[RMDB]
An RNA of 177 nucleotides, treated with 2A3 and DMS and read out base by base.
For 2A3 the reverse transcriptase was SuperScript II with manganese.
Source: RMDB library OK2TRN, as collected in RNAgym.
The RNA was probed in 150 mM KOAc, 10 mM MgCl2 and 150 mM bicine (pH 8.5) at 24 C.

RNA sequence: GGGAACGACUCGAGUAGAGUCGAAAACUCAUGGCAAGGCAUGCGCAGCACAGGAGAGUGCAGAGGAUGAAGCAGAUGAUACAGAUGAUGAUGCAGAAGACCCAGAUGCUGGUGAGGGUGACAGCAGACGUACGCUGGUAUUCGUACCAGCGUACGUAAAAGAAACAACAACAACAAC
Reactivity to 2A3 in 0.01 (KOAc 150mM, MgCl2 10mM, bicine 150mM(pH8.5), 24C), signal-to-noise 1, nucleotides 027 to 126: c020u000c020a050u060g080g030c010a030a060g020g010c000a010u070g000c040g040c080a010g000c020a010c010a060g100g040a100g020a000g020u060g000c030a010g030a040g090g010a010u060g060a010a020g040c020a020g020a090u060g030a020u090a160c060a040g080a000u100g010a030u060g000a010u090g020c010a000g010a180a020g040a070c000c000c000a040g050a110u070g000c010u020g050g000u030g010a040g000g040g000u020g020a020c030a020g020c030a000g030
Reactivity to DMS in 0.01 (KOAc 150mM, MgCl2 10mM, bicine 150mM(pH8.5), 24C), signal-to-noise 2, nucleotides 027 to 126: c020u000c030a090u000g010g020c070a110a100g040g000c080a040u000g020c110g000c070a060g020c040a050c080a070g010g010a120g000a090g020u010g020c050a080g000a150g010g010a090u000g000a070a090g000c050a100g000a060u000g000a110u000a130c090a090g040a080u010g050a080u020g000a040u000g010c020a060g000a070a080g010a140c020c020c020a100g000a100u000g010c030u000g030g010u000g020a070g010g000g030u010g010a060c050a030g000c080a080g010